[RMDB]
RNA sequence: GGGAACGACUCGAGUAGAGUCGAAAAUUGUGGUCAAGACCUUGGCGUAGUAUCCAAGGUUGUCAAGGUUCCUAUUGACUUAACAAUGAUUGAGUUUAUGUUAUGGUGUUAGGAUGGACAGGGGAAAGAUGAUACGUGGAUUCGUCCACGUAUCAUCAAAAGAAACAACAACAACAAC
Reactivity to DMS in 0.01 (KOAc 150mM, MgCl2 10mM, bicine 150mM(pH8.5), 24C), signal-to-noise 4, nucleotides 027 to 126: u000u000g030u000g000g020u020c070a070a100g010a030c000c000u000u000g010g010c200g010u000a160g020u010a130u000c030c050a020a010g000g000u000u000g020u000c070a060a080g020g000u010u010c040c080u000a100u000u010g010a020c010u000u000a060a030c040a030a050u000g000a110u000u010g010a080g010u000u000u000a060u010g020u000u010a060u010g010g010u000g000u000u000a060g000g000a070u010g000g010a050c050a060g010g000g010g010a090a060a100
Reactivity to 2A3 in 0.01 (KOAc 150mM, MgCl2 10mM, bicine 150mM(pH8.5), 24C), signal-to-noise 2, nucleotides 027 to 126: u010u020g020u040g050g010u040c020a040a020g010a020c000c000u010u000g000g000c050g100u120a040g060u060a170u040c050c030a030a040g000g000u000u040g000u030c010a050a020g060g030u020u090c010c010u010a070u020u060g020a030c000u000u060a060a020c050a020a110u100g060a190u120u100g050a120g160u020u070u060a120u120g050u070u040a080u080g020g010u010g040u060u040a030g000g050a050u060g000g000a030c020a060g030g020g000g000a040a080a050
The data come from the RNA Mapping Database (RMDB), library M2PK90. Structure probing data (DMS and 2A3) for a 177-nucleotide construct. Values cover nucleotides 27 to 126. 2A3 adducts were read by reverse transcription with SuperScript II with manganese. For DMS, 5,776 sequencing reads were counted. For 2A3, 2,712 sequencing reads were counted.